RNA sequence: GGGAACGACUCGAGUAGAGUCGAAAAUGAGAAUAAUUUCUGGUGUCUGGCCUAUGAAGGAGAUGACGCCAAGAUUCAUCAGGAUCUGGCUGACGUAAUUGACCGCUCAUUUCGUCGGGCGGCGCGACGUAUGCACUCACUUCGGUGAGUGCAUACGAAAAGAAACAACAACAACAAC
Reactivity to DMS in 0.01 (KOAc 150mM, MgCl2 10mM, bicine 150mM(pH8.5), 24C), signal-to-noise 3, nucleotides 027 to 126: u000g000a110g000a070a080u010a110a100u010u000u010c110u010g030g000u000g000u000c010u000g010g040c050c050u000a160u020g030a160a060g030g000a190g000a100u010g000a040c040g000c010c020a030a070g000a030u010u000c060a120u010c160a080g010g000a150u010c040u000g000g000c050u000g010a110c100g020u020a020a080u010u000g020a160c050c050g000c040u010c010a150u000u000u000c160g000u020c100g010g000g010c020g000g010c030g020c130g020a070
Reactivity to 2A3 in 0.01 (KOAc 150mM, MgCl2 10mM, bicine 150mM(pH8.5), 24C), signal-to-noise 2, nucleotides 027 to 126: u140g000a080g050a020a100u180a030a120u040u070u100c100u060g020g010u010g020u010c030u050g070g070c020c020u210a190u250g200a180a140g030g030a090g030a060u150g020a020c000g050c000c000a000a000g000a000u000u000c030a110u050c030a120g050g000a050u010c020u030g020g000c050u040g000a010c030g030u070a080a050u060u070g070a130c040c030g020c020u020c030a100u070u200u160c130g060u050c000g000g000g010c000g020g020c000g030c000g040a070